[RMDB]
RNA sequence: GGGAACGACUCGAGUAGAGUCGAAAACGUGUUCAUCGUCAUCGUCGUCUUUAUUAAAAUUGAAACGAGUGUUUUUGAACGACGACUAUUGUUGCUUUGAUAAAAAAUGUGUGUACUUGGAAGAUAAACCGUAUUGUCUGUCGUGUAUAAAGGACGAUCGAAAAGGCAAGUUCGCUUGCCUUUUCGAAAAAGAAACAACAACAACAAC
Reactivity to 2A3 in 0.01 (KOAc 150mM, MgCl2 10mM, bicine 150mM(pH8.5), 24C), signal-to-noise 1, nucleotides 027 to 156: c020g000u010g040u110u100c030a070u120c090g040u030c030a160u010c090g020u000c030g080u000c070u140u110u020a160u090u120a080a130a180a150u070u070g090a090a060a030c040g010a090g200u150g040u020u080u020u060u140g100a020a020c010g020a000c000g000a020c070u080a060u050u030g120u020u060g020c030u020u030u080g070a040u260a090a060a000a030a000a030u100g060u010g000u000g010u030a020c070u120u040g030g010a010a000g000a080u080a010a080a000c000c000g000u060a120u090u080g030u000c010u050g060u020c000g040u070g030u070a000u080a110a050a000g080g020a000c030g000a020